[RMDB]
Source: RMDB library 15KLIB, as collected in RNAgym. Chemical mapping of a 170-nucleotide RNA with 2A3 and DMS.
RNA sequence: GGGAACGACUCGAGUAGAGUCGAAAAUCGGAAGGAAUUCUCCCAAGAAGCGAAGAGAACACAAGAAUCGGAAGUCUUCCCGAAGACGCCGGGGACAUCUCGGAAUGAGAAAGGAGACAGGUGGAAGAAAGGUCUUGGUUCGCCAAGACCAAAAGAAACAACAACAACAAC
Reactivity to 2A3 in 0.01 (KOAc 150mM, MgCl2 10mM, bicine 150mM(pH8.5), 24C), signal-to-noise 6, nucleotides 027 to 129: u070c000g010g020a020a000g040g020a040a040u160u000c030u050c050c000c010a030a030g050a030a010g030c050g020a030a010g000a000g010a020a010c050a000c010a100a030g040a060a030u070c050g000g020a060a010g030u000c000u020u040c000c000c000g040a020a010g060a030c020g000c030c010g010g000g000g010a030c010a100u030c020u000c020g020g010a030a020u100g020a050g050a040a050a000g010g010a040g000a020c020a020g040g030u060g010g060a030a010g060a050a050a020
Reactivity to DMS in 0.01 (KOAc 150mM, MgCl2 10mM, bicine 150mM(pH8.5), 24C), signal-to-noise 4, nucleotides 027 to 129: u020c060g000g000a000a000g020g010a060a080u080u010c060u020c050c000c050a060a080g000a050a070g000c060g000a000a000g020a020g000a070a050c200a090c070a070a080g020a040a010u040c060g000g000a100a040g010u010c060u040u010c000c000c040g030a030a030g000a090c220g000c020c080g000g000g000g000a050c100a080u030c030u030c080g010g040a030a030u040g020a030g020a050a090a060g020g020a040g030a000c100a030g000g000u000g020g010a040a030g020a070a090a110
For 2A3, 13,778 sequencing reads were counted. High DMS reactivity at an A or C suggests that its Watson-Crick edge is free. Conditions: 150 mM KOAc, 10 mM MgCl2 and 150 mM bicine (pH 8.5), 24 C. DMS adducts were read by reverse transcription with MarathonRT.